This 207-nucleotide RNA was probed chemically with 2A3. The RNA was probed in 150 mM KOAc, 10 mM MgCl2 and 150 mM bicine (pH 8.5) at 24 C.
[RMDB]
RNA sequence: GGGAACGACUCGAGUAGAGUCGAAAACGCUGGGCCGAGCGUCGAUGUGCAUCGAUCGUCUGAAGCGCGCACGGACGGGAGCACACCGACGCGUUUGACGCCUGUGCUGAAGCGCGCACGGCAACCGAAAGGUGCGACAUCUCCGUUCGCGGAGAAAUUUGAAUUUUCUGUUCGCAGAAAAUUCAAAAAAAGAAACAACAACAACAAC
Reactivity to 2A3 in 0.01 (KOAc 150mM, MgCl2 10mM, bicine 150mM(pH8.5), 24C), signal-to-noise 1, nucleotides 027 to 156: c020g010c040u040g020g030g010c100c120g190a070g000c000g000u000c000g000a000u000g000u000g000c000a030u300c130g000a000u000c000g000u000c000u010g020a170a020g010c000g010c000g000c010a000c030g000g000a010c000g010g010g020a040g050c010a030c030a020c040c010g010a000c010g040c000g020u010u080u060g050a020c020g010c010c000u060g010u040g000c020u030g000a120a040g020c010g000c000g000c010a010c010g010g020c030a020a000c020c020g000a070a030a010g050g010u020g020c000g150a030c060a120u020c050u010c000c010g010u050u070c180g030c000g070g060a020g020a050a040a070
The 2A3 profile rests on 985 reads.